[RMDB]
RNA sequence: GGGAACGACUCGAGUAGAGUCGAAAACGUAAGGGCCGAUAAACAGACGCUGCCAGGCCUGUGGCAACGACUCUUCGCUGUGGGUCUUAAACAUAGCCGCCACAGGCGCAAGCGCCUCGGCAUCAAGAUUAAUCAGUCGGUUCGCCGACUGAUUAAUAAAAGAAACAACAACAACAAC
Reactivity to DMS in 0.01 (KOAc 150mM, MgCl2 10mM, bicine 150mM(pH8.5), 24C), signal-to-noise 4, nucleotides 027 to 126: c110g000u040a090a100g000g020g010c010c000g010a100u030a070a110a100c300a060g000a070c030g000c020u000g000c050c270a080g010g010c010c000u000g020u010g000g000c000a110a080c230g000a010c030u010c060u040u030c160g010c050u030g010u000g000g020g000u010c080u020u020a080a090a140c180a050u060a050g030c060c140g000c020c000a020c020a000g000g000c010g010c050a180a040g000c010g010c020c030u000c030g010g000c020a060u020c110a120a110g000
Reactivity to 2A3 in 0.01 (KOAc 150mM, MgCl2 10mM, bicine 150mM(pH8.5), 24C), signal-to-noise 6, nucleotides 027 to 126: c060g080u160a080a150g070g060g000c010c020g030a040u160a130a160a050c110a050g090a030c010g000c020u020g090c110c040a080g070g040c000c000u000g000u000g000g010c040a120a030c070g060a060c030u000c020u280u180c120g070c190u110g050u120g080g000g030u020c010u060u170a020a030a020c060a070u160a030g060c060c050g000c000c000a000c000a000g000g020c010g010c010a020a010g000c010g000c000c030u010c010g010g000c010a000u090c020a010a050g010
The record gives the reactivity of an RNA of 177 nucleotides to DMS and 2A3. For DMS, 6,947 sequencing reads were counted. Reactivities are given for positions 27 through 126. Conditions: 150 mM KOAc, 10 mM MgCl2 and 150 mM bicine (pH 8.5), 24 C. The 2A3 profile rests on 3,897 reads.